Structure probing data (2A3 and DMS) for a 177-nucleotide construct. DMS (dimethyl sulfate) methylates the pairing face of unpaired adenines and cytosines. 2A3 adducts were read by reverse transcription with SuperScript II with manganese. The RNA was probed in 150 mM KOAc, 10 mM MgCl2 and 150 mM bicine (pH 8.5) at 24 C. DMS adducts were read by reverse transcription with MarathonRT.
[RMDB]
RNA sequence: GGGAACGACUCGAGUAGAGUCGAAAAUGCGAUCACGGGGAUCUCUACACGCAAGCAAGUAUAGCCAUCAGCACUUAAAGUAGGCCGCCGGGGACACUCACCUUAGCCCGCGCGCUCCGAAUUUUAUCAUUAUGGGAGCUUUCGAGCUCCCAUAAUGAAAAGAAACAACAACAACAAC
Reactivity to 2A3 in 0.01 (KOAc 150mM, MgCl2 10mM, bicine 150mM(pH8.5), 24C), signal-to-noise 3, nucleotides 027 to 126: u140g000c010g010a030u070c050a020c090g040g020g000g010a030u020c070u020c000u080a060c060a010c040g060c030a000a070g000c000a100a000g030u050a080u040a090g040c020c010a090u050c010a040g040c020a020c060u050u110a050a030a090g050u040a060g100g000c010c000g000c000c020g000g010g030g020a010c040a010c060u080c000a060c010c050u050u140a030g050c010c030c000g030c030g010c020g010c060u030c000c000g020a060a050u040u070u040u030a150u070
Reactivity to DMS in 0.01 (KOAc 150mM, MgCl2 10mM, bicine 150mM(pH8.5), 24C), signal-to-noise 2, nucleotides 027 to 126: u010g000c030g000a060u010c050a080c120g000g030g000g000a020u000c000u030c000u000a160c120a160c130g000c100a070a200g020c170a010a040g000u010a090u000a180g000c000c060a000u000c050a080g000c030a080c070u000u020a080a010a040g050u000a090g010g060c300c050g010c030c030g020g030g000g020a120c190a010c010u030c050a030c010c080u000u000a100g000c030c000c020g000c050g000c000g040c030u010c030c040g010a100a090u000u020u060u000a110u030
The data come from the RNA Mapping Database (RMDB), library RFM100.